[RMDB]
RNA sequence: GGGAACGACUCGAGUAGAGUCGAAAAGUGCUCUGUCUGUGUGUGAGUGACUGCUGAGAGACACAGAAAAUCUCUAAAUGAAGCCCCUCCAACUAGUGGACACUAAUGCCAAACGGUAGGUGGUAUCGAAUUUAUAAGCUUUCGAGCUUAUAAAUUCAAAAGAAACAACAACAACAAC
Reactivity to DMS in 0.01 (KOAc 150mM, MgCl2 10mM, bicine 150mM(pH8.5), 24C), signal-to-noise 6, nucleotides 027 to 126: g020u000g000c080u000c010u000g000u010c010u010g020u000g030u000g020u000g010a070g020u010g010a060c040u000g010c060u000g000a070g010a050g000a050c070a080c080a150g010a130a080a120a100u000c020u000c020u000a050a120a080u010g000a100a170g000c020c010c020c030u000c010c020a070a070c070u000a060g010u000g000g000a050c050a080c090u010a060a080u010g010c030c020a040a090a090c090g010g000u000a030g010g020u000g010g000u000a080u010c130
Reactivity to 2A3 in 0.01 (KOAc 150mM, MgCl2 10mM, bicine 150mM(pH8.5), 24C), signal-to-noise 4, nucleotides 027 to 126: g030u030g010c030u010c010u030g110u020c010u020g070u020g010u020g030u030g070a060g020u050g040a070c030u050g000c090u110g030a010g000a010g000a050c010a010c020a140g130a080a110a030a040u040c020u000c010u050a080a150a130u170g050a090a060g020c000c010c000c000u000c020c010a040a050c010u050a020g080u020g040g010a000c010a010c080u130a050a060u140g010c010c020a100a120a010c070g030g010u050a030g000g060u060g040g020u030a080u130c030